[RMDB]
RNA sequence: GGGAACGACUCGAGUAGAGUCGAAAACAUAGUUGUUCGCAACUAUGAAAAAAGCGUACUACCCAGGCGUCGCGCUCUUGGACCAGUCCCAAAUAGGACUGCUAGAGCCGACGAACUACCUGGGUAUCGCAAAAAGGAGCUGCUUCGGCAGCUCCAACAAUAUGUCACCGUUCGCGGUGACAUAUUGAAAAGAAACAACAACAACAAC
Reactivity to 2A3 in 0.01 (KOAc 150mM, MgCl2 10mM, bicine 150mM(pH8.5), 24C), signal-to-noise 2, nucleotides 027 to 156: c000a000u010a000g010u000u060g040u090u060c240g000c110a000a010c000u010a010u070g070a170a000a000a000a000a040g020c050g020u090a060c030u000a000c020c000c000a000g010g010c000g000u000c000g010c040g030c050u030c020u080u090g100g030a150c080c060a010g000u040c030c030c020a130a300a210u200a100g000g000a000c000u000g000c020u040a000g000a000g020c040c000g000a000c000g010a030a060c060u160a030c000c000u000g000g000g010u000a000u010c010g000c000a080a000a000a080a090g030g000a000g000c010u050g000c020u110u140c280g120g020c010a000g000c000u010c000c000a000a000
Reactivity to DMS in 0.01 (KOAc 150mM, MgCl2 10mM, bicine 150mM(pH8.5), 24C), signal-to-noise 1, nucleotides 027 to 156: c000a030u000a030g010u000u000g020u010u010c240g060c020a010a020c000u000a000u000g000a000a030a110a110a120a190g010c010g000u000a060c160u000a030c000c000c000a010g000g000c010g030u020c010g010c080g040c010u010c020u020u020g060g020a120c300c020a020g010u010c010c000c060a040a180a300u000a050g000g000a050c010u010g000c050u000a010g010a010g000c020c010g010a080c000g010a020a070c040u010a090c010c000u000g020g000g030u000a000u000c000g070c030a050a100a100a090a110g000g020a030g000c000u000g000c000u010u000c270g070g030c000a000g000c010u010c000c000a020a030
Background
Conditions: 150 mM KOAc, 10 mM MgCl2 and 150 mM bicine (pH 8.5), 24 C. The record gives the reactivity of an RNA of 207 nucleotides to 2A3 and DMS. For DMS, 2,828 sequencing reads were counted. The data come from the RNA Mapping Database (RMDB), library RNAMAK.